[RMDB]
Chemical mapping of a 207-nucleotide RNA with 2A3. It was measured as part of the RMDB library RNAMAK. The reactions ran in a buffer of 150 mM KOAc, 10 mM MgCl2 and 150 mM bicine (pH 8.5), at 24 C.

RNA sequence: GGGAACGACUCGAGUAGAGUCGAAAAGCGUACUACGCUCUUUUGACGCUCCUCCCAUGGAGUAUCUUCCCAAAUAGGAAGAUACUAUGAAGUGGGAGUGAGCGAUAAGAGCGUAUCGCAAAACAAGACUCUAGAUGUUCGCAUCUAGAGUCUUGAACUGCUAAACGGUGUUCGCACCGUUUAGCAGAAAAGAAACAACAACAACAAC
Reactivity to 2A3 in 0.01 (KOAc 150mM, MgCl2 10mM, bicine 150mM(pH8.5), 24C), signal-to-noise 1, nucleotides 027 to 156: g010c020g000u080a120c080u020a010c030g000c000u000c000u200u080u090u160g240a090c020g000c010u020c010c000u030c000c000c000a000u020g020g010a040g010u010a020u000c000u000u000c010c010c020a260a250a180u210a050g020g000a000a000g000a000u000a010c000u020a300u140g040a030a010g010u000g020g000g000a030g000u160g000a000g010c000g000a000u010a000a000g000a000g000c000g000u000a010u060c000g040c030a010a070a040a000c000a000a000g000a000c000u000c000u010a000g000a000u020g040u110u050c260g000c170a000u000c000u000a000g000a000g000u000c000u000u000g000a000a000